This 207-nucleotide RNA was probed chemically with DMS and 2A3. For DMS the reverse transcriptase was MarathonRT. The DMS profile rests on 4,712 reads. It was measured as part of the RMDB library OK3TST. The 2A3 profile rests on 2,789 reads.
RNA sequence: GGGAACGACUCGAGUAGAGUCGAAAAGAACUGCACAAUAUUUGAAGACGAAUUCCUUACGGUAUCAUCGUAUCGCGUUGAUAGGUCUUCAAGAGAUUUCAUCAACCUACGGGACAUGUAACCAGUCUCCGCAGUCUUAACUGCUGUAUCGACGAGACUAUGGGGUAAUGUUCGCAUUACCCCAUAGAAAAGAAACAACAACAACAAC
Reactivity to DMS in 0.01 (KOAc 150mM, MgCl2 10mM, bicine 150mM(pH8.5), 24C), signal-to-noise 3, nucleotides 027 to 156: g020a050a050c020u000g030c030a210c060a080a060u010a100u000u010u040g000a040a010g010a090c010g020a110a160u000u010c060c050u010u000a050c040g020g030u000a080u000c070a090u010c130g040u000a000u010c050g030c060g050u000u000g000a030u010a090g030g010u000c010u030u000c120a110a120g010a090g010a070u010u010u000c110a050u000c030a020a060c030c020u000a030c020g010g010g010a040c030a050u000g030u010a080a110c050c020a230g000u000c020u010c000c030g000c000a050g050u000c080u010u010a070a080c040u000g030c010u010g020u000a050u000c060g000a190c020g030a110g000a190
Reactivity to 2A3 in 0.01 (KOAc 150mM, MgCl2 10mM, bicine 150mM(pH8.5), 24C), signal-to-noise 5, nucleotides 027 to 156: g050a030a020c050u110g030c070a040c020a110a200u130a150u230u130u180g060a090a010g040a010c040g070a090a090u100u070c020c010u060u140a040c070g040g000u050a040u140c070a050u060c040g020u030a030u120c060g000c020g050u000u010g020a020u010a030g010g010u000c010u060u090c050a040a030g110a010g010a080u010u090u100c040a020u020c010a050a040c020c000u040a020c050g010g000g050a010c030a130u130g020u030a090a030c030c020a040g040u050c020u000c070c050g000c020a000g010u050c080u100u120a140a050c050u050g000c010u020g030u080a080u140c080g110a090c030g030a050g010a050